[RMDB]
RNA sequence: GGGAACGACUCGAGUAGAGUCGAAAAUGUCUGUGCUUCUCACUGUGUAGCAAGAUGGAGGAGGUUGGUCUUCAACUCCUGUCCCUCAGGGCUUGACUUGGAGUCUUAGAAGAGAGGGUGGCACUUAGUCAAAUGCUAGCUUGGUGAUCAACUAUGGAUAGGUGAAUGAAUUCGUUCAUUCACCUAUAAAAGAAACAACAACAACAAC
Reactivity to DMS in 0.01 (KOAc 150mM, MgCl2 10mM, bicine 150mM(pH8.5), 24C), signal-to-noise 4, nucleotides 027 to 156: u000g020u000c020u000g010u000g010c010u000u010c010u000c030a170c070u010g040u000g040u000a110g020c040a080a100g020a070u000g000g010a300g010g010a060g020g020u010u000g010g030u000c050u000u000c050a040a060c020u000c000c010u000g010u000c030c010c030u000c090a130g020g020g040c060u000u000g040a050c060u000u010g020g000a080g000u000c020u000u000a100g010a100a120g000a130g010a130g020g010g020u000g020g000c020a050c060u000u000a100g000u000c050a060a040a090u000g020c030u000a060g010c040u000u000g010g020u010g000a090u000c040a050a080c050u000a070u000g020g000
Reactivity to 2A3 in 0.01 (KOAc 150mM, MgCl2 10mM, bicine 150mM(pH8.5), 24C), signal-to-noise 5, nucleotides 027 to 156: u090g010u000c030u030g120u050g010c010u060u040c040u050c040a070c100u110g040u050g030u120a030g030c040a050a040g020a060u070g040g040a030g030g010a030g020g040u020u040g040g040u040c020u070u070c050a020a020c000u020c010c020u020g060u070c000c000c000u040c040a050g050g010g000c050u060u070g010a050c020u040u070g060g000a030g020u020c010u050u130a090g030a130a010g040a010g010a030g010g030g000u020g020g000c030a020c060u050u070a020g010u040c030a040a040a060u120g020c010u020a030g020c010u020u030g020g000u030g030a040u040c020a010a070c020u070a100u150g180g020